The data come from the RNA Mapping Database (RMDB), library OK3TST.
This 207-nucleotide RNA was probed chemically with 2A3.
The reactions ran in a buffer of 150 mM KOAc, 10 mM MgCl2 and 150 mM bicine (pH 8.5), at 24 C.
RNA sequence: GGGAACGACUCGAGUAGAGUCGAAAAAGUUCUAGUCCUCACCUAAGAUCAGACUUACAAGGCCCUCAAAGGAAGAGCACUCGGUUGGGCUUUGUGGUGGGGAUUAGUGUCUCAUUUUUAGUCCCAAAUUAAAAACGAGAUUUUGGGCUGUACAUCACCUCAAAAUGCACUUCGGUGCAUUUUGAGGAAAAGAAACAACAACAACAAC
Reactivity to 2A3 in 0.01 (KOAc 150mM, MgCl2 10mM, bicine 150mM(pH8.5), 24C), signal-to-noise 1, nucleotides 027 to 156: a000g070u070u030c000u000a000g000u020c000c000u000c000a010c000c010u140a140a090g020a090u200c070a060g140a260c020u060u000a010c010a000a000g000g000c000c020c020u090c090a120a000a040g050g000a060a060g080a070g020c060a010c100u030c070g060g000u030u040g010g010g080c000u010u000u000g020u010g000g000u000g000g000g060g000a000u000u020a000g000u020g010u000c060u020c050a140u070u150u050u030u260a050g060u180c020c000c000a020a000a050u030u060a060a040a030a010a080c110g060a020g020a100u000u000u000u000g020g000g000c020u070g100u080a050c020a090u080c020a040